[RMDB]
RNA sequence: GGGAACGACUCGAGUAGAGUCGAAAACCCCCGGAUGAGCCCGCAGUAUUUUCCUUAUAUGAUCAGGUCCCAUUGCGGGCGGCGCCGCUUGCCCGGAGCCUGAGAGGAUUAUGAAAACGUGGCGAGCCGAAAGAUUCCACUUCGGUGGAAUCUUUCGAAAAGAAACAACAACAACAAC
Reactivity to 2A3 in 0.01 (KOAc 150mM, MgCl2 10mM, bicine 150mM(pH8.5), 24C), signal-to-noise 1, nucleotides 027 to 126: c000c000c000c010c000g040g000a110u040g020a050g000c000c000c000g020c020a010g060u070a140u030u050u000u040c020c020u180u020a170u070a080u300g140a110u130c000a000g000g090u060c000c040c010a110u080u180g050c000g000g050g000c000g000g000c050g030c040c180g010c000u040u160g010c020c030c000g050g040a010g050c000c000u030g000a000g020a010g030g030a060u080u130a020u190g190a040a030a090a000c060g020u120g050g000c030g000a000g020c000